[RMDB]
RNA sequence: GGGAACGACUCGAGUAGAGUCGAAAAUGCGAUGCGUCGGAUGGGUUGUUUGCGUGGGCUACGUCGUGCCUUGCGUUGCUCACGGCCCUCUGGCAAAUCCUCAUCCGUGCGGGUGCUGGGCUGGGCGGGGUUGCGUAGCGCACUGGCGGGGACAUCGUCACAAUAACAGUUUCGACUGUUAUUGUGAAAAAGAAACAACAACAACAAC
Reactivity to 2A3 in 0.01 (KOAc 150mM, MgCl2 10mM, bicine 150mM(pH8.5), 24C), signal-to-noise 2, nucleotides 027 to 156: u180g000c020g010a010u030g020c030g030u020c010g030g000a030u050g070g030g000u050u100g060u120u180u200g010c000g010u010g000g000g000c010u060a030c010g040u070c050g040u040g100c020c010u040u100g000c010g010u030u040g000c010u000c000a000c000g010g040c000c000c000u010c010u030g000g030c000a030a000a030u030c000c020u020c000a060u000c000c000g010u040g030c000g010g040g040u160g040c090u060g000g020g020c070u210g080g000g090c100g020g000g020g000u120u060g020c060g060u120a030g010c030g000c070a020c040u030g060g010c000g000g010g000g010a000c010a030u040c050g020
Chemical mapping of a 207-nucleotide RNA with 2A3.
The 2A3 profile rests on 2,351 reads.
Source: RMDB library OK3TST, as collected in RNAgym.
2A3 adducts were read by reverse transcription with SuperScript II with manganese.